[RMDB]
RNA sequence: GGGAACGACUCGAGUAGAGUCGAAAAAGUAUAUAAGUGCUCGUCCUCCUCGUAAACAGGGCUGCGGCGUGCCGGCUUAUGAGGCCCGUAAGAUUGAUGACCCAGAGAGUUAAAACUCCGGAACUCGUAGAGUAUUCCACUUCGGUGGAAUACUCUAAAAAGAAACAACAACAACAAC
Reactivity to 2A3 in 0.01 (KOAc 150mM, MgCl2 10mM, bicine 150mM(pH8.5), 24C), signal-to-noise 2, nucleotides 027 to 126: a000g160u160a170u040a020u010a200a080g020u030g070c010u010c040g020u000c030c000u010c000c000u060c060g050u120a090a090a100c020a070g040g020g010c040u040g020c070g030g000c010g000u010g000c000c020g000g050c010u090u030a050u040g070a030g030g040c010c000c000g020u010a060a000g030a070u130u210g080a030u030g070a070c020c000c020a050g020a010g000a010g100u050u060a000a020a120a020c070u010c030c000g020g010a000a040c000u050c090g010
Reactivity to DMS in 0.01 (KOAc 150mM, MgCl2 10mM, bicine 150mM(pH8.5), 24C), signal-to-noise 2, nucleotides 027 to 126: a120g000u010a120u080a050u040a090a040g000u010g010c010u020c030g000u000c020c010u010c030c030u000c070g010u020a050a100a150c190a080g020g020g000c070u030g010c070g010g010c010g000u010g000c060c050g030g020c030u010u010a040u000g000a150g020g030c020c000c010g020u030a050a050g000a100u000u010g000a120u000g000a060c060c000c010a060g000a110g020a030g020u040u010a050a060a110a130c050u020c040c020g000g010a090a090c080u000c070g010